[RMDB]
RNA sequence: GGGAACGACUCGAGUAGAGUCGAAAAGCAUAACUGUUGAUGGCUAUACAGACUACUGCUGGCAUGGGUUCUAGUCUUGACUCUGCUGUUUCAUGCCUUGUGAUCUGGCACAGAUUAGUCUUUCUCAGCUUUAGUUUAUUUGUCUGUAAAUUGGGAAAUACGACUGAUGAUUCGUCAUCAGUCGUAUAAAAGAAACAACAACAACAAC
Reactivity to 2A3 in 0.01 (KOAc 150mM, MgCl2 10mM, bicine 150mM(pH8.5), 24C), signal-to-noise 4, nucleotides 027 to 156: g050c030a050u070a220a080c050u050g000u050u030g040a070u050g030g010c030u050a020u040a150c040a040g010a010c020u050a010c020u060g040c000u010g010g010c030a180u180g050g000g050u110u120c030u090a020g020u000c000u050u150g020a050c070u030c020u100g040c020u030g030u050u040u050c040a040u040g090c050c030u100u080g030u020g020a080u030c060u110g020g000c040a030c010a070g040a030u040u020a030g000u000c000u020u100u050c030u020c030a020g010c000u070u040u060a010g030u060u140u010a150u100u200u150g040u000c050u020g070u100a030a110a190u090u070g070g020g040a000a060
Reactivity to DMS in 0.01 (KOAc 150mM, MgCl2 10mM, bicine 150mM(pH8.5), 24C), signal-to-noise 2, nucleotides 027 to 156: g040c070a130u000a070a100c060u000g030u010u000g020a110u010g030g000c020u000a090u000a100c040a120g030a070c000u000a050c040u010g000c010u000g030g020c110a070u010g010g010g030u010u000c020u000a060g030u000c020u010u010g020a120c050u000c040u010g030c030u000g020u000u000u010c040a050u000g020c060c070u000u020g020u000g000a050u010c060u010g010g030c040a120c040a080g020a100u000u010a040g020u000c030u010u000u000c040u010c000a060g030c040u000u000u000a050g010u000u000u010a040u020u010u010g010u010c030u000g020u000a040a050a160u000u020g010g050g010a110a080
Structure probing data (2A3 and DMS) for a 207-nucleotide construct. For DMS the reverse transcriptase was MarathonRT. Source: RMDB library OK3TST, as collected in RNAgym. For DMS, 4,827 sequencing reads were counted.